[RMDB]
RNA sequence: GGGAACGACUCGAGUAGAGUCGAAAAUUAAAGAUCGAAAGAUCAAACGGUAGAAAAGAUGGUUUGAAUACCACGCCUUCUACCAAUAUAAUAAAUAAAUAGGCGUAAGUACGAAAGUACAAAAAAAGUUAAUUCAUAGGUUCGCCUAUGAAUUAACAAAAGAAACAACAACAACAAC
Reactivity to DMS in 0.01 (KOAc 150mM, MgCl2 10mM, bicine 150mM(pH8.5), 24C), signal-to-noise 1, nucleotides 027 to 126: u000u020a060a140a070g010a020u000c000g000a110a210a140g040a000u000c000a070a120a050c180g000g000u000a020g000a020a000a010a000g010a160u000g000g000u000u000u000g000a270a090u000a040c040c000a020c010g000c000c000u000u010c000u040a000c000c040a030a070u000a090u060a110a120u000a050a090a220u010a040a020a130u010a040g000g000c020g010u000a110a090g010u010a000c010g010a100a070a150g000u000a000c010a000a020a030a090a110a000a110
Reactivity to 2A3 in 0.01 (KOAc 150mM, MgCl2 10mM, bicine 150mM(pH8.5), 24C), signal-to-noise 1, nucleotides 027 to 126: u130u100a170a080a050g010a020u000c000g000a080a040a010g010a000u000c020a050a060a000c050g000g010u000a000g010a000a020a020a020g060a210u020g000g030u060u050u200g080a150a030u100a080c010c010a010c010g000c000c010u050u090c000u000a020c000c020a000a000u040a000u000a030a080u040a040a040a040u140a030a080a090u300a010g000g000c010g010u030a070a090g000u000a000c010g010a110a070a000g000u000a000c000a030a090a000a000a000a000a020